[RMDB]
RNA sequence: GGGAACGACUCGAGUAGAGUCGAAAAUUCGUCGAGAAAAAUCACGUCGAGGUCAGGAAUGUCGGCGUGAACCGGCACGUGGUACUCGGCGAGGUCAUGGUUGACGAACAGCCCGCGCCCGGUGUCCAUGUACAACUGGGUUCGCCCAGUUGUACAUAAAAGAAACAACAACAACAAC
Reactivity to DMS in 0.01 (KOAc 150mM, MgCl2 10mM, bicine 150mM(pH8.5), 24C), signal-to-noise 2, nucleotides 027 to 126: u020u000c000g040u000c010g000a050g010a040a070a300a070a090u000c000a030c000g030u000c020g010a010g000g000u000c050a130g020g040a140a100u000g010u000c000g000g010c020g000u010g000a020a020c010c020g030g000c060a080c040g020u000g000g000u000a120c010u020c050g000g020c010g000a000g010g010u000c040a090u000g000g020u010u010g000a040c040g000a080a040c150a120g000c020c000c020g050c100g000c160c010c000g000g020u010g000u010c110c110
Chemical mapping of a 177-nucleotide RNA with DMS. The reactions ran in a buffer of 150 mM KOAc, 10 mM MgCl2 and 150 mM bicine (pH 8.5), at 24 C. DMS adducts were read by reverse transcription with MarathonRT.